[RMDB]
RNA sequence: GGGAACGACUCGAGUAGAGUCGAAAAUACGCGAUGGCGGCGUAACAGCCCCCAUCUGUCUCGCGUCGCUCCUGGCCCUUGGGGAGCGUGAGACAUCGACAAAAAGGGUGUAGCCGCCGCGUUCUCCGACUGCGGAUGCGCCGGUGAAAUCUAAUCACUCACGUUAUAACUUCGGUUAUAACGUGAGAAAAGAAACAACAACAACAAC
Reactivity to 2A3 in 0.01 (KOAc 150mM, MgCl2 10mM, bicine 150mM(pH8.5), 24C), signal-to-noise 1, nucleotides 027 to 156: u280a040c090g010c050g050a050u050g000g030c010g000g000c000g030u100a090a060c020a100g070c000c000c010c000c000a000u050c050u020g000u020c000u000c000g030c000g020u080c160g050c110u000c000c000u010g070g020c010c020c000u050u050g000g010g000g000a020g000c000g000u000g000a000g000a000c060a050u120c080g080a070c120a060a040a000a020a030g020g000g000u030g010u060a010g010c030c000g020c090c000g010c000g010u000u040c040u010c040c040g210a190c120u290g040c090g040g020a030u050g000c010g040c020c000g000g020u010g020a050a040a010u030c070u140a030a080u110c050a020
Reactivity to DMS in 0.01 (KOAc 150mM, MgCl2 10mM, bicine 150mM(pH8.5), 24C), signal-to-noise 1, nucleotides 027 to 156: u000a050c060g000c030g040a030u000g080g020c030g000g010c020g010u010a090a190c160a250g020c000c000c000c010c000a110u020c050u030g000u000c000u030c000g050c040g020u000c020g010c000u000c010c000u000g030g010c010c020c080u020u040g000g000g000g000a130g000c010g020u020g000a080g010a050c010a040u000c060g000a100c190a100a060a100a060a060g040g020g000u000g020u010a300g010c000c000g070c020c030g020c040g010u000u010c010u000c040c000g000a150c080u010g020c010g020g010a070u010g020c000g010c010c020g000g020u010g000a060a130a130u000c010u000a100a190u010c060a230
The record gives the reactivity of an RNA of 207 nucleotides to 2A3 and DMS. Values cover nucleotides 27 to 156. The 2A3 profile rests on 1,816 reads. Conditions: 150 mM KOAc, 10 mM MgCl2 and 150 mM bicine (pH 8.5), 24 C. 2A3 adducts were read by reverse transcription with SuperScript II with manganese.